[RMDB]
RNA sequence: GGGAACGACUCGAGUAGAGUCGAAAACUGCGGAAAUUACGUUAGUCCCGUCAGUAAAAUUACAGAUAGGCGAUCGUGAUAAUCGUGGCUAUUACUGGGAUGGAGGUCACUGGCGCGACCACGGCUGGCUGUGUAGCCUAUUCGUAGGCUACACAGCAAAAGAAACAACAACAACAAC
Reactivity to DMS in 0.01 (KOAc 150mM, MgCl2 10mM, bicine 150mM(pH8.5), 24C), signal-to-noise 2, nucleotides 027 to 126: c030u010g010c060g030g020a060a100a110u000u000a080c020g000u010u000a130g020u010c030c040c020g010u000c020a060g020u010a030a120a110a090u000u010a050c030a060g010a060u000a070g040g010c030g020a040u000c020g000u000g010a050u000a050a040u000c030g050u010g010g010c020u010a060u000u000a050c110u000g020g000g000a040u000g010g000a100g000g020u000c080a050c030u000g020g010c040g000c190g000a050c030c060a050c030g000g030c110u000g010
Reactivity to 2A3 in 0.01 (KOAc 150mM, MgCl2 10mM, bicine 150mM(pH8.5), 24C), signal-to-noise 2, nucleotides 027 to 126: c020u050g000c030g090g040a100a210a140u180u090a090c030g000u010u060a030g040u110c030c030c000g010u080c010a010g030u050a020a150a090a110u150u070a030c020a020g040a050u040a040g060g000c060g040a030u030c050g100u090g030a080u130a100a030u030c010g000u020g090g000c000u040a060u100u080a120c050u050g040g000g050a070u070g030g050a030g000g040u060c010a000c040u030g000g000c040g000c030g030a010c010c010a030c030g060g000c040u040g060